[RMDB]
Source: RMDB library M2RFPK, as collected in RNAgym.
This 207-nucleotide RNA was probed chemically with 2A3.
The RNA was probed in 150 mM KOAc, 10 mM MgCl2 and 150 mM bicine (pH 8.5) at 24 C.
RNA sequence: GGGAACGACUCGAGUAGAGUCGAAAAAGCGAUGAUACGUCAUCGCAACGAUUGCCUGAUCGUAAAACAGGAGACGACCGUGGCCGCGACCACGUAAAAAAGCGUAACGUGGUCUACGGACCACGAAAAAAGCGCGGAACGUUCGCGUUCCGCGCAACAUUUGACCCUAGUUCGCUAGGGUCAAAUGAAAAGAAACAACAACAACAAC
Reactivity to 2A3 in 0.01 (KOAc 150mM, MgCl2 10mM, bicine 150mM(pH8.5), 24C), signal-to-noise 1, nucleotides 027 to 156: a020g010c000g000a000u010g000a000u010a070c190g050u000c000a010u010c000g000c000a020a020c000g000a000u010u000g030c000c000u020g000a010u000c060g100u240a000a060a020a020c020a020g010g010a050g070a040c070g070a020c040c030g000u000g020g000c000c000g010c020g010a010c020c010a000c020g000u010a030a060a000a000a000a000g070c030g030u050a000a010c020g000u000g000g010u000c010u040a140c170g030g020a090c000c000a000c000g090a060a000a000a000a020a000g000c020g000c000g010g010a000a000c030g040u100u170c230g000c000g070u010u000c010c000g020c050g000c000a000a000